[RMDB]
RNA sequence: GGGAACGACUCGAGUAGAGUCGAAAAACUCGUGCACCUCUACCAGGAUGGAACCUUGCUCGUCUCUCACGCAGGAACGGAGAUGGGCCAGGGGCUGCAUACGAAAGUUGCACAGGUGGCUGCGUCCACCCUCUGGCGGAUUCGUCCGCCAGAGGGUAAAAGAAACAACAACAACAAC
Reactivity to 2A3 in 0.01 (KOAc 150mM, MgCl2 10mM, bicine 150mM(pH8.5), 24C), signal-to-noise 1, nucleotides 027 to 126: a000c020u030c030g000u020g000c000a010c020c010u020c030u080a110c040c080a050g010g090a060u080g020g020a030a020c010c010u000u020g000c020u020c010g040u000c000u000c010u000c030a060c070g120c080a090g070g090a120a060c090g050g000a000g010a010u010g000g020g000c000c000a000g010g000g020g000c030u050g020c020a040u010a130c030g070a100a030a010g020u020u020g000c000a000c000a000g010g010u010g040g000c050u040g030c040g020u000c020c010
Reactivity to DMS in 0.01 (KOAc 150mM, MgCl2 10mM, bicine 150mM(pH8.5), 24C), signal-to-noise 3, nucleotides 027 to 126: a030c000u000c050g030u010g030c040a060c050c010u000c010u000a140c210c040a090g000g040a060u010g010g000a150a140c030c000u010u000g020c000u000c000g020u000c010u010c000u000c160a190c070g020c140a060g020g000a140a130c300g000g010a030g010a030u000g000g000g010c040c100a020g000g000g010g030c110u000g040c090a070u010a060c100g000a050a080a090g000u000u010g000c030a010c080a070g000g000u000g000g000c080u000g000c080g000u000c030c060